Chemical mapping of a 177-nucleotide RNA with DMS.
For DMS the reverse transcriptase was MarathonRT.
The reactions ran in a buffer of 150 mM KOAc, 10 mM MgCl2 and 150 mM bicine (pH 8.5), at 24 C.
RNA sequence: GGGAACGACUCGAGUAGAGUCGAAAAGAUAUGGACAUCGACGGUCAACGAUCCAAGGGAGAAUUAUAGUCGGAAACGACUAUGUUCAUCGAUCUUGUUGAUCGUUGACCGUCGAUGUCCUAAGUCACCAACCGUGUAAGUUCGCUUACACGGUUGGAAAAGAAACAACAACAACAAC
Reactivity to DMS in 0.01 (KOAc 150mM, MgCl2 10mM, bicine 150mM(pH8.5), 24C), signal-to-noise 2, nucleotides 027 to 126: g010a050u010a300u010g000g000a000c000a000u000c000g010a040c000g000g010u020c000a000a010c000g010a010u000c020c000a040a020g000g000g000a120g030a020a010u000u020a000u000a010g010u000c000g000g000a180a160a220c000g020a020c000u000a020u000g000u000u000c050a300u010c210g000a060u020c000u010u000g000u020u000g000a000u000c000g030u000u000g000a000c000c000g000u000c000g000a000u000g020u000c000c010u000a000a050g000u000c050a250